Notes: An RNA of 207 nucleotides, treated with 2A3 and DMS and read out base by base. The reactions ran in a buffer of 150 mM KOAc, 10 mM MgCl2 and 150 mM bicine (pH 8.5), at 24 C. The 2A3 profile rests on 2,032 reads. For DMS, 3,588 sequencing reads were counted. Values are in units of 0.01, from 0 to 300, in steps of 10.
[RMDB]
RNA sequence: GGGAACGACUCGAGUAGAGUCGAAAAUUACUCUUGUUAGGUGAAAGUUGAUGGUCGCCGAGCCAGUCCGUACAUCCAAAAAUGACUCUAUGUAGUAGGAAGUCGAGAGCCUAUGAGAGUUAGAGUCAUGCCUAUUUUGUGUUCGCACAAAAUAGAACGUUGGUUAAUUGUUCGCAAUUAACCAACGAAAAGAAACAACAACAACAAC
Reactivity to 2A3 in 0.01 (KOAc 150mM, MgCl2 10mM, bicine 150mM(pH8.5), 24C), signal-to-noise 2, nucleotides 027 to 156: u090u050a070c020u010c020u080u070g020u040u080a060g040g040u040g040a130a090a080g060u100u090g110a100u090g040g050u030c040g010c100c010g030a020g030c040c020a020g050u030c040c040g030u040a060c020a090u030c060c000a010a000a000a170a000u020g000a010c000u000c010u000a030u070g050u020a030g010u010a000g010g000a050a040g040u120c090g020a030g000a030g260c000c010u010a020u040g040a070g000a010g070u010u020a010g000a000g000u000c000a000u020g010c000c000u000a000u000u000u000u000g010u000g000u020u040c160g000c080a000c000a000a000a000a000u000a010g020a080a020
Reactivity to DMS in 0.01 (KOAc 150mM, MgCl2 10mM, bicine 150mM(pH8.5), 24C), signal-to-noise 2, nucleotides 027 to 156: u000u000a090c030u000c030u010u000g000u020u000a050g020g030u010g010a060a060a140g060u000u010g000a110u000g020g010u000c040g040c040c040g000a140g000c020c010a120g020u010c050c040g000u000a130c020a100u000c040c050a010a050a090a130a050u000g000a040c000u000c010u000a030u000g010u000a300g000u000a020g000g000a040a110g010u010c160g000a220g000a280g020c000c000u000a030u010g010a220g030a240g030u010u000a040g010a050g010u000c000a020u000g000c100c000u000a010u010u000u010u000g030u000g020u000u020c300g010c030a020c020a000a000a000a010u000a000g000a050a160